RNA sequence: GGGAACGACUCGAGUAGAGUCGAAAAUUGCACCAACAGAUAGAUUUAUUUGUGGACGGACACAUACAACUAUCGUCGGCAACCCGCCGACCCCCGACGCAUCGUGUCUGAACUACUUCAGUGAGUGGUCCUCAAAAUGGUUCGCCAUUUUGAGGACAAAAGAAACAACAACAACAAC
Reactivity to DMS in 0.01 (KOAc 150mM, MgCl2 10mM, bicine 150mM(pH8.5), 24C), signal-to-noise 2, nucleotides 027 to 126: u000u020g030c060a180c020c050a050a040c270a050g000a000u020a020g010a150u010u020u030a120u030u030u000g000u000g010g010a160c110g000g000a050c020a050c160a050u000a060c130a050a180c050u030a020u080c070g000u070c010g000g000c160a110a100c070c120c080g010c020c060g000a020c090c040c000c020c000g000a150c130g040c170a030u000c060g010u000g000u010c000u030g010a120a090c080u000a010c130u010u010c060a070g030u000g010a030g060u010g000
Reactivity to 2A3 in 0.01 (KOAc 150mM, MgCl2 10mM, bicine 150mM(pH8.5), 24C), signal-to-noise 5, nucleotides 027 to 126: u110u070g010c030a040c050c030a070a040c060a050g050a020u050a020g230a190u020u120u130a110u040u130u160g040u030g040g080a110c120g040g070a010c000a010c000a010u120a030c040a080a000c070u110a050u070c060g010u010c010g000g000c030a130a150c070c010c030g000c000c010g040a040c000c010c010c010c000g030a050c010g030c050a080u090c070g000u000g030u000c010u010g020a040a030c010u090a050c030u120u160c070a090g040u050g130a020g050u160g090